[RMDB]
The record gives the reactivity of an RNA of 177 nucleotides to 2A3 and DMS.
RNA sequence: GGGAACGACUCGAGUAGAGUCGAAAAUAGGUCGUGUUCGCACGACCUAAGAUAAAAUGCAUAAAUUGCCAGUAACCCGAAACACAAGGGAGUGCACCUGGCCUACGAUGUCGUUCGCGACAUCGAAUCUCAUGCAGUAAUUCGUUACUGCAUGAGAAAAAGAAACAACAACAACAAC
Reactivity to 2A3 in 0.01 (KOAc 150mM, MgCl2 10mM, bicine 150mM(pH8.5), 24C), signal-to-noise 7, nucleotides 027 to 126: u060a000g010g000u000c010g000u010g040u050u070c230g030c060a000c000g000a000c000c000u000a000a000g000a000u130a020a080a030a050u090g000c010a000u090a250a260a090u220u110g010c010c010a010g030u050a150a140c020c000c010g050a150a210a010c110a010c020a100a060g030g000g010a050g040u060g000c020a030c030c000u000g010g010c000c010u060a060c020g000a000u000g000u000c000g010u010u070c220g000c010g090a000c000a000u000c000g010a040a050
Reactivity to DMS in 0.01 (KOAc 150mM, MgCl2 10mM, bicine 150mM(pH8.5), 24C), signal-to-noise 7, nucleotides 027 to 126: u000a000g000g020u000c000g040u000g000u010u010c200g060c000a010c030g020a020c000c000u000a020a020g010a110u000a060a040a090a090u010g010c050a090u010a060a090a080u010u010g010c010c020a040g000u010a140a090c010c000c000g000a110a090a210c140a070c140a090a100g000g010g010a270g010u000g000c030a120c230c010u010g010g000c020c280u010a080c010g010a000u000g010u000c010g020u010u010c250g010c010g010a010c000a000u000c000g000a050a120
High 2A3 reactivity points to a flexible backbone, as in loops and unpaired stretches.